This 177-nucleotide RNA was probed chemically with DMS and 2A3.
2A3 is a SHAPE reagent: it acylates the 2'-hydroxyl of flexible nucleotides of all four kinds.
The reactions ran in a buffer of 150 mM KOAc, 10 mM MgCl2 and 150 mM bicine (pH 8.5), at 24 C.
It was measured as part of the RMDB library OK1LIB.
DMS adducts were read by reverse transcription with MarathonRT.
2A3 adducts were read by reverse transcription with SuperScript II with manganese.
The 2A3 profile rests on 7,706 reads.
Values are in units of 0.01, from 0 to 300, in steps of 10.

RNA sequence: GGGAACGACUCGAGUAGAGUCGAAAACAGCCGGGGAUUGACGACGGUGUCGCAGCCGAGCCUGCAAAAGGGCCGCCGCGCCGGGGAGCUGCUGCAGAACCCGCCGCGAUCCGGUCUGCCGGUCGUCUAAAUAUGCGCUAUUCGUAGCGCAUAUUUAAAAAGAAACAACAACAACAAC
Reactivity to DMS in 0.01 (KOAc 150mM, MgCl2 10mM, bicine 150mM(pH8.5), 24C), signal-to-noise 7, nucleotides 027 to 126: c110a110g000c030c000g020g000g000g010a160u040u010g000a020c010g010a050c010g000g010u010g000u010c150g010c000a040g010c020c100g010a130g020c120c010u000g000c040a070a050a120a090g010g020g000c020c020g020c240c020g000c030g030c300c020g010g000g000g000a180g010c040u010g010c110u030g020c030a080g010a120a150c020c000c010g020c300c020g010c000g010a050u010c300c010g000g020u010c020u010g000c000c000g000g010u000c020g000u010c030
Reactivity to 2A3 in 0.01 (KOAc 150mM, MgCl2 10mM, bicine 150mM(pH8.5), 24C), signal-to-noise 6, nucleotides 027 to 126: c040a000g060c010c010g040g010g040g050a120u090u150g020a040c010g010a000c000g000g030u050g060u130c100g000c010a000g000c020c070g090a030g020c030c010u010g010c010a010a030a070a130g040g010g000c010c010g010c030c010g000c000g020c040c010g010g010g000g020a080g040c040u190g020c090u110g030c050a010g010a080a050c010c000c000g000c010c000g000c000g000a020u060c050c010g000g020u020c030u040g030c000c000g050g130u040c000g010u000c010